[RMDB]
RNA sequence: GGGAACGACUCGAGUAGAGUCGAAAAUUCAUUUUUGAACUUGAUCGCCGAGCUGCUUCGAUUUGCCGAUCGUGAGUUCUACAGAGACUUUUGGAAUGCAGAGACGAUAGGAUAUUUCUGGAAAUCAUAUUACCUGGUGGUUCGCCACCAGGUAAUAAAAAGAAACAACAACAACAAC
Reactivity to DMS in 0.01 (KOAc 150mM, MgCl2 10mM, bicine 150mM(pH8.5), 24C), signal-to-noise 1, nucleotides 027 to 126: u020u030c030a110u000u000u000u010u000g020a090a130c040u000u000g000a040u010c040g030c060c010g050a130g030c110u000g000c080u000u010c050g000a060u000u010u000g010c120c000g000a070u000c020g010u010g010a110g040u000u000c030u010a080c060a020g010a190g000a070c060u000u010u010u010g010g000a080a110u000g010c010a030g010a170g000a030c110g020a040u000a060g000g000a090u000a090u000u000u000c010u000g020g010a080a120a100u010c090a100

Record summary: The record gives the reactivity of an RNA of 177 nucleotides to DMS. High DMS reactivity at an A or C suggests that its Watson-Crick edge is free. Conditions: 150 mM KOAc, 10 mM MgCl2 and 150 mM bicine (pH 8.5), 24 C.